[RMDB]
RNA sequence: GGGAACGACUCGAGUAGAGUCGAAAAGAUAUGGAACCUGUGGAGUUCGAAGAACUUGAUCGGAAACGAUCAAGGGAGAACCCACGGUUCCUAAGUCAAAAGUACCCCAGGUUCGCCUGGGGUACAAUCAUACCGGACUGUUCGCAGUCCGGUAUGAAAAAGAAACAACAACAACAAC
Reactivity to DMS in 0.01 (KOAc 150mM, MgCl2 10mM, bicine 150mM(pH8.5), 24C), signal-to-noise 1, nucleotides 027 to 126: g010a010u000a300u000g000g020a030a000c020c000u040g150u000g000g000a220g020u000u010c000g030a110a210g010a110a110c020u000u010g000a010u000c000g000g000a050a120a180c000g000a010u040c030a010a000g000g040g040a090g000a000a000c000c000c000a000c010g000g000u000u000c000c000u000a020a060g000u010c010a020a070a100a160g000u010a000c010c020c000c030a000g000g020u000u010c160g020c000c010u010g020g000g030g030u000a000c000a030a070
Reactivity to 2A3 in 0.01 (KOAc 150mM, MgCl2 10mM, bicine 150mM(pH8.5), 24C), signal-to-noise 1, nucleotides 027 to 126: g000a000u050a060u120g030g040a040a030c040c080u190g000u090g000g080a300g100u070u040c130g160a300a030g040a060a000c000u010u000g000a010u000c020g000g060a070a010a060c000g000a010u000c000a000a000g000g030g000a010g020a020a010c020c000c000a010c030g000g010u000u000c000c000u000a040a000g030u000c030a070a120a060a000g050u010a000c000c000c000c000a010g040g060u110u100c260g050c130c010u050g010g000g000g000u000a000c000a000a010